[RMDB]
RNA sequence: GGGAACGACUCGAGUAGAGUCGAAAAUCCCCAUAGUUCGCUAUGGGGAAAAGCCGUACCGCGUAGCACGCGGAUAGGAGCGAAGAUAUGCACGGCACGCGAAAACCUUCGCCUUCGGGCGAAGGAACUCAGUGCUCUAGUUCGCUAGAGCACUGAGAAAAGAAACAACAACAACAAC
Reactivity to DMS in 0.01 (KOAc 150mM, MgCl2 10mM, bicine 150mM(pH8.5), 24C), signal-to-noise 1, nucleotides 027 to 126: u000c000c030c000c000a000u000a000g010u000u010c290g000c010u000a020u000g000g000g000g000a000a030a070a030g000c040c010g030u000a150c010c000g010c010g020u000a190g030c070a300c000g010c030g000g000a040u000a000g000g030a110g000c000g000a120a070g030a190u000a050u020g010c020a060c030g000g000c000a050c080g000c090g000a030a040a100a090c000c000u000u000c000g000c000c000u000u020c170g000g000g000c000g000a020a000g000g000a020a040
Reactivity to 2A3 in 0.01 (KOAc 150mM, MgCl2 10mM, bicine 150mM(pH8.5), 24C), signal-to-noise 2, nucleotides 027 to 126: u020c050c000c000c000a000u040a000g010u030u050c240g010c100u010a000u000g000g000g000g000a070a030a000a010g010c010c000g020u030a040c010c000g000c020g040u010a030g090c160a040c110g000c010g000g000a020u060a060g130g020a040g020c050g040a060a050g060a170u170a060u280g060c040a020c040g000g000c010a000c050g100c030g060a030a050a060a120c000c000u000u000c010g000c000c000u030u100c260g110g020g010c000g010a000a000g000g000a000a000